[RMDB]
RNA sequence: GGGAACGACUCGAGUAGAGUCGAAAACAUGAUUGCUCGGCAACUAUAAUGACGGGUAGGUCGGGUACGAACCGUCGUAUGGUUCGUGGGCUGAGAGGGCUUUAGGGAUUAAAGCUCGGCGAACUGACUGGUACUGAUCUUUCGAGAUCAGUGCCAGAAAAGAAACAACAACAACAAC
Reactivity to 2A3 in 0.01 (KOAc 150mM, MgCl2 10mM, bicine 150mM(pH8.5), 24C), signal-to-noise 7, nucleotides 027 to 126: c040a050u140g010a150u100u180g000c010u010c000g090g020c030a020a030c040u040a020u060a190a250u130g010a000c010g020g000g030u040a020g040g110u090c100g030g020g140u110a010c020g020a120a050c010c000g040u060c020g060u060a060u080g000g000u010u020c030g000u030g000g010g000c020u020g030a030g010a020g040g010g000c030u030u040u060a080g070g090g060a100u080u110a030a000a000g000c000u000c000g050g020c050g020a050a040c040u050g060a020
Reactivity to DMS in 0.01 (KOAc 150mM, MgCl2 10mM, bicine 150mM(pH8.5), 24C), signal-to-noise 6, nucleotides 027 to 126: c090a100u040g010a080u020u010g000c000u020c030g010g020c080a030a060c090u020a060u020a060a070u010g010a040c010g010g000g000u010a070g000g000u020c040g000g000g000u020a040c030g010a060a140c010c010g020u010c100g020u010a050u010g000g010u000u000c040g040u020g000g010g000c030u000g010a110g000a150g010g000g000c020u010u010u000a010g000g060g020a160u040u010a000a020a020g010c010u000c000g000g020c080g010a070a130c060u010g000a300